[RMDB]
RNA sequence: GGGAACGACUCGAGUAGAGUCGAAAAUUGACGGUGGGGUGGUCUUUACUCCAAUGAGCAUCGAACCACAGCGAAGUGGCUUCAUCGCAAAGAUGCAUUAGUCACGGAGCCACGUCGACAUGGCUAAACUCAUAGGUAAUUUCGAUUACCUAUGAGUAAAAGAAACAACAACAACAAC
Reactivity to DMS in 0.01 (KOAc 150mM, MgCl2 10mM, bicine 150mM(pH8.5), 24C), signal-to-noise 9, nucleotides 027 to 126: u000u010g010a030c040g020g030u010g020g030g010g030u000g010g010u000c030u000u000u000a040c020u000c020c300a120a140u010g010a030g010c030a020u000c030g000a090a060c010c010a020c050a170g010c030g010a260a140g010u000g010g010c010u000u000c020a040u000c050g010c180a080a100a160g010a030u000g010c300a090u000u000a030g020u000c030a040c050g000g010a300g000c010c040a020c020g010u000c010g010a070c120a080u010g000g010c080u000a050a110
Reactivity to 2A3 in 0.01 (KOAc 150mM, MgCl2 10mM, bicine 150mM(pH8.5), 24C), signal-to-noise 9, nucleotides 027 to 126: u040u040g020a020c060g080g090u120g030g060g030g010u010g000g000u000c000u000u040u020a030c020u020c020c040a100a160u300g000a010g000c020a010u010c020g040a100a030c010c000a010c010a020g050c030g030a070a010g000u000g000g000c000u020u010c010a020u020c010g010c120a240a140a050g020a030u040g000c040a080u050u140a020g010u020c010a000c030g010g000a000g000c010c000a010c010g020u010c010g010a040c030a110u130g100g000c030u090a140a090